[RMDB]
Background:
Chemical mapping of a 207-nucleotide RNA with DMS and 2A3. The RNA was probed in 150 mM KOAc, 10 mM MgCl2 and 150 mM bicine (pH 8.5) at 24 C. The DMS profile rests on 3,168 reads.
RNA sequence: GGGAACGACUCGAGUAGAGUCGAAAAGAAUCACCGUACCUAUUUAGGUUUACGCUCCAAGAUCGGUGGAUAGCAGCCCUAUCAAUAUCUAGGAGAACUGUGCUAUGUUUAGAAGAUUAGGUAGUAUAUUACACAGCCAUGUUCGCAUGGCUGUGAAUGUCAAAAGAAACUUCGGUUUCUUUUGACAAAAAGAAACAACAACAACAAC
Reactivity to DMS in 0.01 (KOAc 150mM, MgCl2 10mM, bicine 150mM(pH8.5), 24C), signal-to-noise 2, nucleotides 027 to 156: g000a090a050u010c030a150c030c010g010u010a070c010c010u000a150u000u000u010a030g030g000u000u000u000a050c060g030c030u000c040c000a100a080g000a040u010c060g050g030u010g020g020a090u000a070g020c040a190g000c100c100c010u000a120u000c010a080a070u000a060u000c100u000a210g050g000a040g010a090a060c040u000g000u000g040c050u000a070u000g030u010u020u000a110g020a150a150g020a180u000u000a050g020g010u000a110g000u020a120u000a040u010u000a220c000a020c000a010g000c000c010a020u000g010u000u000c290g000c030a010u000g000g000c010u000g010u010g000a030a040
Reactivity to 2A3 in 0.01 (KOAc 150mM, MgCl2 10mM, bicine 150mM(pH8.5), 24C), signal-to-noise 3, nucleotides 027 to 156: g040a020a080u060c000a000c010c000g020u040a010c010c000u100a170u300u250u300a080g010g000u040u050u070a010c030g020c000u010c000c000a040a000g010a010u030c020g000g020u010g040g060a020u050a030g080c160a010g040c010c000c000u030a030u130c060a140a020u020a010u210c020u010a020g010g020a060g030a090a070c060u060g020u040g050c000u020a040u080g070u070u190u040a050g040a220a100g020a180u080u090a040g110g000u010a020g050u020a060u030a020u160u070a030c000a000c000a000g010c000c000a000u020g010u030u040c040g000c070a000u000g000g010c000u000g010u010g000a000a010